Annotation:
The data come from the RNA Mapping Database (RMDB), library OK1LIB. An RNA of 177 nucleotides, treated with 2A3 and DMS and read out base by base. The DMS profile rests on 2,104 reads. The 2A3 profile rests on 1,104 reads.
RNA sequence: GGGAACGACUCGAGUAGAGUCGAAAAGAAGCAUGCGAAGUAGUUCGCUACGAAGAUAUAGGAGGCGAUUGCCGGGCCUAUAUCGAAGUAUUACCCCGGCGAAUGCCAGUAAUACGAAGCAUGCGAAGGGAUAGCUAUGCUUCGGCAUAGCUAUCCCAAAAGAAACAACAACAACAAC
Reactivity to 2A3 in 0.01 (KOAc 150mM, MgCl2 10mM, bicine 150mM(pH8.5), 24C), signal-to-noise 2, nucleotides 027 to 126: g160a080a020g000c000a000u000g020c000g050a160a030g000u000a000g000u000u080c150g000c070u000a000c000g030a050a010g020a000u030a000u030a060g000g010a010g000g020c050g300a300u160u300g020c030c000g070g000g090c000c000u030a020u030a020u000c030g000a030a000g000u000a000u000u000a030c000c010c150c140g000g000c020g080a090a180u300g000c000c030a020g020u070a000a000u000a010c040g000a020a000g030c000a000u000g000c020g000a020a020
Reactivity to DMS in 0.01 (KOAc 150mM, MgCl2 10mM, bicine 150mM(pH8.5), 24C), signal-to-noise 2, nucleotides 027 to 126: g010a150a170g040c020a010u000g000c040g010a080a300g000u000a000g000u010u050c180g060c020u000a000c000g000a070a190g000a030u000a010u000a000g000g020a250g000g000c000g080a110u030u050g020c030c010g030g090g040c000c020u000a000u020a000u000c000g000a070a300g000u000a000u030u000a080c030c070c120c180g010g000c010g000a010a050u040g000c000c000a070g070u000a020a030u020a070c060g010a070a300g000c000a010u000g000c030g000a090a030